Overview
Chemical mapping of a 177-nucleotide RNA with DMS and 2A3. DMS adducts were read by reverse transcription with MarathonRT. The 2A3 profile rests on 1,079 reads. It was measured as part of the RMDB library OK2TST.
RNA sequence: GGGAACGACUCGAGUAGAGUCGAAAAUGGUUCGUGACCCCACCGUCAAGGACUCCAGCCGUCUGUCGGCCAUCAAGGAAUUGAACGUUCUGGCUGAAAUCACGUUCGUGGACGAGUCGGGCAAGACCCCAUACGUACCCUUCGGGGUACGUAUGGGAAAAGAAACAACAACAACAAC
Reactivity to DMS in 0.01 (KOAc 150mM, MgCl2 10mM, bicine 150mM(pH8.5), 24C), signal-to-noise 1, nucleotides 027 to 126: u000g000g010u010u040c090g000u020g030a170c060c030c020c040a060c050c050g000u000c010a180a130g030g000a080c030u020c070c060a010g000c000c020g000u040c030u000g000u000c060g030g000c040c010a070u000c130a120a120g000g000a050a090u010u010g000a130a040c040g000u010u000c040u000g010g010c040u000g000a110a070a130u010c130a060c080g020u010u000c040g010u030g000g020a060c100g000a060g000u010c200g000g020g000c040a020a150g010a060c110
Reactivity to 2A3 in 0.01 (KOAc 150mM, MgCl2 10mM, bicine 150mM(pH8.5), 24C), signal-to-noise 2, nucleotides 027 to 126: u060g020g030u110u080c030g030u130g300a300c000c040c000c000a000c030c000g030u010c020a040a060g020g010a050c020u000c020c000a020g000c010c020g010u080c030u070g080u030c020g000g010c000c010a110u180c070a100a180g060g000a100a110u150u150g030a090a020c000g060u090u000c120u220g040g000c000u000g050a110a140a050u190c040a020c100g000u060u040c020g010u080g060g000a000c000g000a060g020u020c010g010g000g020c000a000a010g040a030c000